[RMDB]
An RNA of 177 nucleotides, treated with DMS and 2A3 and read out base by base. For DMS, 3,760 sequencing reads were counted. 2A3 adducts were read by reverse transcription with SuperScript II with manganese. As a SHAPE reagent, 2A3 marks flexible, mostly unpaired nucleotides at the ribose 2'-OH. The data come from the RNA Mapping Database (RMDB), library OK2TRN. The RNA was probed in 150 mM KOAc, 10 mM MgCl2 and 150 mM bicine (pH 8.5) at 24 C.
RNA sequence: GGGAACGACUCGAGUAGAGUCGAAAAACCUGCGCACCGACCGCCUGGUGCGAAGCCACCGCGGUCGCGAGGGUGGUUAUGAAUUGGCGCGUCCGGGCACCGAGAUCAGCAUCGCCGACGUAUUGCGGAUAAAGUCGACAUUCGUGUCGACUUUAUCAAAAGAAACAACAACAACAAC
Reactivity to DMS in 0.01 (KOAc 150mM, MgCl2 10mM, bicine 150mM(pH8.5), 24C), signal-to-noise 3, nucleotides 027 to 126: a060c010c000u010g030c020g030c020a140c210c010g000a040c010c030g010c040c070u010g020g010u010g020c060g000a060a130g010c090c010a030c040c060g010c000g010g010u010c030g000c060g010a120g000g030g020u000g010g000u000u000a080u000g010a070a150u000u010g000g000c030g030c070g000u000c060c080g020g010g000c040a050c060c040g020a090g000a090u010c060a070g010c080a060u000c020g020c030c020g010a090c070g020u000a080u000u010g000c110g000
Reactivity to 2A3 in 0.01 (KOAc 150mM, MgCl2 10mM, bicine 150mM(pH8.5), 24C), signal-to-noise 2, nucleotides 027 to 126: a000c010c000u030g000c020g010c030a050c050c020g040a020c000c030g040c050c110u120g000g000u000g010c020g030a060a030g050c060c000a030c020c020g020c020g030g080u030c050g000c090g010a100g040g080g020u020g010g100u120u070a130u200g090a090a080u110u070g050g000c010g030c020g090u090c060c060g040g000g010c050a050c050c000g070a040g010a120u110c010a010g000c000a020u030c050g050c060c000g060a040c000g080u140a080u140u230g070c050g010